[RMDB]
RNA sequence: GGGAACGACUCGAGUAGAGUCGAAAAGCCAUCACGGACCAAUUUACCACUUGCAUUCCUGGUUGGGUGAUUUCUGUGUACUUUAGACGAGAGUAAGCGCGGGAUUCAAAGACGUAGUCGUUGCAAGUGCGCACGAGGUACUGGUAUCCUACUAGGAGUAAAAGUGCAUGUUCGCAUGCACUUUUACAAAAGAAACAACAACAACAAC
Reactivity to 2A3 in 0.01 (KOAc 150mM, MgCl2 10mM, bicine 150mM(pH8.5), 24C), signal-to-noise 4, nucleotides 027 to 156: g040c010c030a040u120c050a080c090g070g030a040c030c040a070a060u170u080u110a100c030c030a050c080u010u080g040c030a100u070u030c000c030u030g020g020u050u080g040g000g050u070g010a050u000u040u060c030u010g010u000g020u060a050c010u040u080u110a070g030a080c080g040a030g000a030g140u100a120a060g020c010g000c040g030g060g030a040u110u120c080a100a070a070g030a010c050g100u100a040g070u050c030g010u020u010g030c040a020a040g000u000g050c050g000c010a040c120g050a000g040g020u060a110c030u050g030g020u080a010u050c010c000u000a070c040u050a030g030g050a040
Reactivity to DMS in 0.01 (KOAc 150mM, MgCl2 10mM, bicine 150mM(pH8.5), 24C), signal-to-noise 1, nucleotides 027 to 156: g020c020c020a130u000c060a120c080g040g090a100c030c060a090a080u000u000u000a100c000c010a100c060u000u010g010c080a130u000u000c000c000u000g010g050u010u000g000g020g050u000g030a090u000u010u000c020u010g000u000g000u000a020c020u000u000u000a210g000a080c020g000a170g010a180g000u000a070a090g020c030g020c000g000g000g000a120u000u000c020a040a130a060g010a070c040g000u000a070g030u000c020g030u000u000g020c080a070a130g000u000g000c080g050c020a030c120g000a110g020g000u010a090c020u000g010g010u000a100u000c030c010u000a080c040u010a060g020g010a130